[RMDB]
RNA sequence: GGGAACGACUCGAGUAGAGUCGAAAAGCAUAAAUGUUUGGAACAUUUGUUUCAAAUUUAUCGUUUACCGGUAUGAAACCUUUUCGAUCAAGUUUGAUAUUUGAACUUUCGAUAAAUUUUGAAUUGGGAUCAUCGAACAGUUCGCUGUUCGAUGAUCAAAAGAAACAACAACAACAAC
Reactivity to 2A3 in 0.01 (KOAc 150mM, MgCl2 10mM, bicine 150mM(pH8.5), 24C), signal-to-noise 3, nucleotides 027 to 126: g000c010a050u100a130a220a090u200g160u090u070u130g050g000a050a010c030a090u050u050u300g100u020u050u030c000a000a000a000u020u090u000a010u050c070g000u070u030u060a070c010c000g070g100u060a120u160g130a090a090a060c010c030u000u030u090u150c080g040a090u190c080a090a000g000u010u010u070g050a070u020a160u090u050u150g060a060a030c040u000u120u060c010g000a010u140a060a110a130u090u210u160u040g180a140a110u020u040g090g120